[RMDB]
RNA sequence: GGGAACGACUCGAGUAGAGUCGAAAAUUAAAAGCGGUGCCGUCCUUUAAUGCCAGGUGUCCUGCAGCCCAACAGGCUAUUAAAGAGGGGGAAGUGAGCUGUGUGUAGCGACAGGAUUCUGAAAGAGAAAUAAACAUAUUUUCGAAUAUGUUUAUUUAAAAGAAACAACAACAACAAC
Reactivity to DMS in 0.01 (KOAc 150mM, MgCl2 10mM, bicine 150mM(pH8.5), 24C), signal-to-noise 6, nucleotides 027 to 126: u010u010a060a060a120a120g010c070g020g020u000g020c050c030g010u000c040c010u000u010u000a050a070u010g010c040c030a080g000g020u000g000u000c020c010u000g010c080a120g020c020c020c030a090a120c140a080g010g010c050u000a030u000u000a030a070a070g010a110g010g000g000g000g010a060a090g010u000g000a070g010c030u000g020u000g020u000g010u000a090g020c050g010a080c070a070g000g000a090u000u000c040u000g010a050a060a100g010a160g010
Reactivity to 2A3 in 0.01 (KOAc 150mM, MgCl2 10mM, bicine 150mM(pH8.5), 24C), signal-to-noise 2, nucleotides 027 to 126: u090u040a040a060a000a010g050c010g050g060u030g010c020c020g020u040c000c030u090u160u100a090a000u090g050c010c010a040g020g050u030g040u070c000c000u040g000c010a030g010c000c000c030a010a030c020a000g040g020c010u040a050u190u180a160a080a040g110a100g010g010g000g000g000a040a000g080u050g090a010g010c040u000g030u020g030u010g030u110a010g040c000g030a010c000a040g020g050a050u140u000c010u050g060a080a050a000g070a020g070